[RMDB]
RNA sequence: GGGAACGACUCGAGUAGAGUCGAAAACGUAAUAACAAAACAGAGUCAUGAGAACAUUCGUAGUAAAUACAUAUUGGUGGUGGCGCUUCGUACAACUCAAAAGGUCGUAAGGAACGAAGACUCGUAUCUGUCUUAUGAAAUUCGUUUCAUAAGACAGAAAAGAAACAACAACAACAAC
Reactivity to 2A3 in 0.01 (KOAc 150mM, MgCl2 10mM, bicine 150mM(pH8.5), 24C), signal-to-noise 9, nucleotides 027 to 126: c030g040u070a050a060u130a180a080c100a050a100a020a020c050a020g030a010g040u030c020a060u090g040a030g030a150a020c010a080u070u080c080g010u010a030g020u030a030a110a070u150a070c070a020u130a080u130u130g100g000u050g010g020u020g040g020c040g000c010u000u010c010g020u040a040c020a080a060c060u030c060a010a080a030a040g040g020u010c010g040u070a060a070g110g030a040a040c030g020a040a020g030a030c010u000c040g030u060a060u030
Reactivity to DMS in 0.01 (KOAc 150mM, MgCl2 10mM, bicine 150mM(pH8.5), 24C), signal-to-noise 8, nucleotides 027 to 126: c060g020u020a080a080u030a090a110c170a080a060a090a110c150a090g020a050g010u010c020a100u000g020a100g010a100a100c110a080u010u010c070g010u000a040g010u010a040a080a080u010a040c100a070u010a050u030u010g010g030u010g010g010u000g000g020c050g010c050u010u010c030g000u010a030c100a050a030c020u010c040a040a040a070a160g010g010u000c020g010u010a050a060g010g010a030a040c050g010a060a080g000a050c050u000c010g010u010a080u010